This 207-nucleotide RNA was probed chemically with 2A3 and DMS. The DMS profile rests on 10,653 reads.

RNA sequence: GGGAACGACUCGAGUAGAGUCGAAAAAGAAUAACAAAUGCUAAUUUUCCGUUUACCUACUUAGUGAUGGAAAGGAACUUGUCAUAGAAAUGAAGACAUGGGUAGUAUUUUAGUAUGUCAUUGCCAAGUGAAAUGCAGUUUCAGUGGUGGUGUCAGACUACCAUUUAGUCUUCGGACUAAAUGGUAGAAAAGAAACAACAACAACAAC
Reactivity to 2A3 in 0.01 (KOAc 150mM, MgCl2 10mM, bicine 150mM(pH8.5), 24C), signal-to-noise 7, nucleotides 027 to 156: a000g050a030a060u150a070a020c050a020a040a020u050g010c020u060a090a120u050u040u030u020c020c000g010u020u050u130a100c050c030u100a150c080u230u190a070g030u050g100a050u070g010g030a030a060a040g060g020a030a040c010u030u030g010u030c010a020u050a130g140a100a180a110u180g050a100a040g010a010c010a020u030g050g000g060u040a030g020u010a060u010u120u020u000a060g040u020a050u090g020u020c010a030u010u060g010c030c000a070a050g080u020g060a020a010a010u160g090c110a080g060u010u030u020c020a030g020u010g050g010u000g000g000u010g020u010c010a010g010a090
Reactivity to DMS in 0.01 (KOAc 150mM, MgCl2 10mM, bicine 150mM(pH8.5), 24C), signal-to-noise 4, nucleotides 027 to 156: a110g010a190a080u000a060a080c040a040a050a040u000g010c020u050a080a160u010u000u000u000c000c020g010u000u000u000a060c030c040u000a110c230u010u010a060g030u010g020a050u000g020g000a040a040a080g000g010a060a060c020u000u000g030u000c020a080u000a100g000a110a070a150u010g020a160a170g010a090c020a050u010g010g030g030u000a070g030u000a060u010u000u000u010a110g000u000a070u000g010u010c020a050u000u000g020c010c010a020a100g020u000g010a030a050a060u000g030c090a140g020u000u000u000c030a060g040u000g010g030u000g010g060u000g000u000c030a060g000a290
It was measured as part of the RMDB library OK3TST. Conditions: 150 mM KOAc, 10 mM MgCl2 and 150 mM bicine (pH 8.5), 24 C. 2A3 adducts were read by reverse transcription with SuperScript II with manganese. DMS adducts were read by reverse transcription with MarathonRT.